[RMDB]
RNA sequence: GGGAACGACUCGAGUAGAGUCGAAAACUGUUGGUGCUGAGGUAAUCCAUCUUUAAAACCAUCGCCGUUAGAGGUUGCUUCUGAUAUUUUCGGUUAAGCGACCCAUGAAAUGGUGAUGACCUGAGGUAAAACUACAUCUGUUCGCAGAUGUAGUUUUAAAAGAAACAACAACAACAAC
Reactivity to DMS in 0.01 (KOAc 150mM, MgCl2 10mM, bicine 150mM(pH8.5), 24C), signal-to-noise 4, nucleotides 027 to 126: c020u010g020u000u000g000g020u000g000c030u010g000a040g010g010u000a080a100u010c030c040a070u010c040u010u020u010a060a080a120a160c150c010a010u000c000g010c010c000g030u000u000a060g010a130g020g010u000u000g000c010u000u000c000u000g010a030u010a150u000u010u000u000c010g010g020u010u040a010a020g060c000g010a010c000c000c040a120u010g010a080a050a030u000g010g000u000g000a000u000g000a030c060c060u010g000a060g010g010u010
Reactivity to 2A3 in 0.01 (KOAc 150mM, MgCl2 10mM, bicine 150mM(pH8.5), 24C), signal-to-noise 2, nucleotides 027 to 126: c030u060g040u070u030g020g000u040g010c020u070g050a000g030g010u050a030a040u040c070c010a060u030c000u020u200u070a090a110a010a010c040c000a000u010c000g000c000c000g000u000u020a160g060a140g180g010u000u000g020c000u030u030c000u010g020a060u030a250u190u190u040u020c000g000g030u060u200a010a000g000c000g020a000c030c010c000a030u180g050a020a000a010u050g000g030u010g000a000u020g030a010c000c020u030g040a040g020g070u070

The record gives the reactivity of an RNA of 177 nucleotides to DMS and 2A3. It was measured as part of the RMDB libraries RFM100 and RFMREP. 2A3 adducts were read by reverse transcription with SuperScript II with manganese.